[RMDB]
Chemical mapping of a 177-nucleotide RNA with DMS and 2A3.
The 2A3 profile rests on 4,444 reads.
Values cover nucleotides 27 to 126.
2A3 adducts were read by reverse transcription with SuperScript II with manganese.
RNA sequence: GGGAACGACUCGAGUAGAGUCGAAAAGAUAUGGAACCCGGUACGCGGACCCGUGGUGUUCGGAAACGAACAUGACGGAAGCGUACCCGGUUCCUAAGUCAAAGGACACGUGUUCGCACGUGUCCAAGUGGGAAGAAAAGUUCGCUUUUCUUCCCACAAAAGAAACAACAACAACAAC
Reactivity to DMS in 0.01 (KOAc 150mM, MgCl2 10mM, bicine 150mM(pH8.5), 24C), signal-to-noise 3, nucleotides 027 to 126: g010a040u010a300u010g000g000a000a010c000c000c300g000g040u000a000c020g020c000g010g020a200c300c000c010g000u000g010g040u010g010u010u010c000g000g000a070a070a180c000g010a000a010c010a010u000g000a020c000g000g010a140a130g010c010g000u000a000c000c010c230g000g000u010u010c000c000u010a000a090g010u000c050a130a090a180g020g010a020c000a000c010g060u000g000u000u020c280g010c010a010c000g010u010g000u000c000c000a010a010
Reactivity to 2A3 in 0.01 (KOAc 150mM, MgCl2 10mM, bicine 150mM(pH8.5), 24C), signal-to-noise 2, nucleotides 027 to 126: g000a030u030a030u110g010g020a010a030c010c060c060g000g000u010a000c000g030c050g060g290a170c080c000c030g020u060g150g000u000g040u000u000c020g000g030a060a040a030c020g010a000a000c020a010u030g180a000c020g000g030a110a180g000c000g010u000a000c000c010c000g000g020u000u030c000c000u000a030a010g010u000c040a100a020a240g020g010a010c000a000c000g000u010g040u100u110c300g020c150a000c020g000u000g010u010c000c000a010a000